[RMDB]
RNA sequence: GGGAACGACUCGAGUAGAGUCGAAAACUACAAUUGAUUGAAGAUGGCCUCUCUACUAUCAAUUUUAUACAGGAAAAUAAGGAAAAAUUACAGCAUUCUUACGGAAGAUCCUCCAUCAGAGAGCCACAGAUACUAUGGUUUUCGAACCAUAGUAUCUAAAAGAAACAACAACAACAAC
Reactivity to DMS in 0.01 (KOAc 150mM, MgCl2 10mM, bicine 150mM(pH8.5), 24C), signal-to-noise 4, nucleotides 027 to 126: c030u000a110c170a040a050u010u010g000a030u000u000g000a170a060g000a060u000g010g000c040c010u010c010u000c010u000a130c030u000a020u000c010a020a010u000u000u010u020a090u010a200c120a070g000g000a060a110a080a110u010a070a050g010g000a020a050a070a060a100u000u010a070c140a100g010c080a070u000u000c020u000u000a050c100g000g000a100a060g000a110u000c030c010u000c120c060a070u010c130a060g000a040g000a100g020c020c010a090c290
Reactivity to 2A3 in 0.01 (KOAc 150mM, MgCl2 10mM, bicine 150mM(pH8.5), 24C), signal-to-noise 4, nucleotides 027 to 126: c040u130a040c080a020a030u030u020g010a000u020u060g030a050a020g050a070u090g020g000c010c010u020c000u000c000u030a050c010u010a010u020c000a010a000u000u030u130u130a170u060a080c050a050g030g060a050a090a080a050u120a060a080g010g070a050a130a050a040a010u220u140a090c040a040g040c010a050u030u050c020u050u090a030c050g030g000a040a000g020a050u040c000c010u000c050c000a100u080c020a020g010a000g010a010g040c010c010a020c010